[RMDB]
RNA sequence: GGGAACGACUCGAGUAGAGUCGAAAAGAUGUGAUCGGUUUGCCCGGCUGCAUGGACGACGAGCCCAUCACGGCGUUGACUUCUGAGGAGUUCAGCAGUAGGGCGCUAAGGCGCUCCUCCGCAACCGUAAAUGCGGAGCUUUCGAGCUCCGCAUUUAAAAAGAAACAACAACAACAAC
Reactivity to DMS in 0.01 (KOAc 150mM, MgCl2 10mM, bicine 150mM(pH8.5), 24C), signal-to-noise 1, nucleotides 027 to 126: g020a050u000g010u020g000a030u000c170g000g030u000u000u000g010c080c020c030g010g040c070u010g020c090a080u000g010g000a100c060g010a120c090g030a090g010c040c000c080a090u020c170a110c120g000g000c040g010u000u000g000a040c050u010u000c070u000g000a100g040g000a180g000u010u000c050a050g000c030a020g010u000a090g000g000g020c010g020c030u000a070a110g000g000c000g030c020u010c020c020u000c020c010g020c030a060a170c060c060g030